About this RNA: The record gives the reactivity of an RNA of 177 nucleotides to 2A3. The reactions ran in a buffer of 150 mM KOAc, 10 mM MgCl2 and 150 mM bicine (pH 8.5), at 24 C. Values cover nucleotides 27 to 126.
[RMDB]
RNA sequence: GGGAACGACUCGAGUAGAGUCGAAAAGAUUGGGUAUGACCUUAACCUCACUUUCUAUGCUGCACUUAGUGCGGCCUGCUAUCCGCCGUAGAACAAAGGAUGAGGUGCUUCGGGUGCUGCGCGAACGCCGGACCACCCUCUUCGGAGGGUGGUCCGGAAAAGAAACAACAACAACAAC
Reactivity to 2A3 in 0.01 (KOAc 150mM, MgCl2 10mM, bicine 150mM(pH8.5), 24C), signal-to-noise 1, nucleotides 027 to 126: g070a010u140u130g040g070g060u250a240u300g240a300c010c000u040u090a030a000c020c000u000c000a080c010u010u080u000c100u130a080u080g010c000u000g020c020a000c020u000u120a040g060u160g000c000g000g000c000c000u010g060c000u030a000u060c000c020g000c000c040g090u070a030g060a120a020c120a090a100a000g000g000a060u030g040a000g020g000u000g000c070u070u090c130g000g000g000u020g010c000u000g010c030g000c030g050a030a000c010g000
2A3 is a SHAPE reagent: it acylates the 2'-hydroxyl of flexible nucleotides of all four kinds.